The data come from the RNA Mapping Database (RMDB), library RFM100. This 177-nucleotide RNA was probed chemically with 2A3 and DMS. The RNA was probed in 150 mM KOAc, 10 mM MgCl2 and 150 mM bicine (pH 8.5) at 24 C.
RNA sequence: GGGAACGACUCGAGUAGAGUCGAAAACAGGCCCAGCCACUCCGGGCCGCGAUCAGCCCGGGCUUUCCCUACUUUGGGGCCCAAUGCUGUCGCGAAGAGUUCGGCUCUGUCAGCCCGGCUGGGUCCGCGUUUUGAGUUCUUUCGAGAACUCAAAACGAAAAGAAACAACAACAACAAC
Reactivity to 2A3 in 0.01 (KOAc 150mM, MgCl2 10mM, bicine 150mM(pH8.5), 24C), signal-to-noise 5, nucleotides 027 to 126: c040a010g000g010c000c010c000a000g020c030c010a090c090u060c040c050g020g000g020c030c000g000c000g020a090u270c050a000g000c010c060c060g030g020g000c030u090u230u070c010c000c000u110a230c080u170u220u210g020g010g000g000c000c000c010a070a050u240g000c000u000g000u000c000g000c000g020a060a010g000a010g020u090u210c200g160g030c040u010c000u020g240u190c140a010g010c000c000c000g000g000c000u010g000g010g000u010c000c000g020
Reactivity to DMS in 0.01 (KOAc 150mM, MgCl2 10mM, bicine 150mM(pH8.5), 24C), signal-to-noise 2, nucleotides 027 to 126: c060a130g030g040c000c040c020a000g030c050c040a220c110u050c100c260g010g020g000c000c020g000c000g040a030u030c030a000g000c030c300c300g000g000g000c020u050u030u050c000c010c000u030a110c230u040u070u000g000g000g000g020c000c000c000a100a040u010g000c020u000g020u000c000g000c000g000a030a030g000a030g020u020u040c120g020g000c010u000c000u000g000u010c040a140g000c000c000c000g030g000c000u020g000g020g020u020c000c110g000
The DMS profile rests on 2,332 reads.